[RMDB]
RNA sequence: GGGAACGACUCGAGUAGAGUCGAAAAUGUGUGCUCGAGAGCCUCCCUGUCCGACAGUGCUUUUAGAUCUUCUGAUCUUUCCCUGGAGGAUAUCGCUUAUGCUUCAAGCGAUUCUCGGAAUAAUUAAAUGAGGAACAAGUUUCGACUUGUUCCUCAUAAAAGAAACAACAACAACAAC
Reactivity to 2A3 in 0.01 (KOAc 150mM, MgCl2 10mM, bicine 150mM(pH8.5), 24C), signal-to-noise 1, nucleotides 027 to 126: u160g040u000g020u020g060c030u000c050g070a070g000a010g040c000c010u000c030c010c020u030g020u000c000c000g000a000c050a050g050u020g060c020u000u150u060u060a010g000a020u000c000u130u070c060u210g010a000u000c000u000u010u000c030c000c000u010g060g010a010g020g030a070u030a010u070c010g000c020u090u030a030u210g110c000u060u180c110a020a030g000c000g020a030u020u000c000u010c020g050g030a100a080u100a120a020u220u110a130a210
Reactivity to DMS in 0.01 (KOAc 150mM, MgCl2 10mM, bicine 150mM(pH8.5), 24C), signal-to-noise 3, nucleotides 027 to 126: u010g010u020g000u010g010c030u000c020g010a070g000a170g000c050c060u000c020c000c010u000g010u000c050c020g010a130c100a010g010u000g010c110u000u000u000u000a040g010a030u000c010u000u020c230u040g010a010u000c010u000u000u000c020c030c010u010g000g000a160g010g010a040u000a030u000c000g010c010u000u010a070u000g000c130u010u010c090a030a030g000c000g000a020u000u000c010u000c000g000g000a110a080u010a050a090u020u010a040a080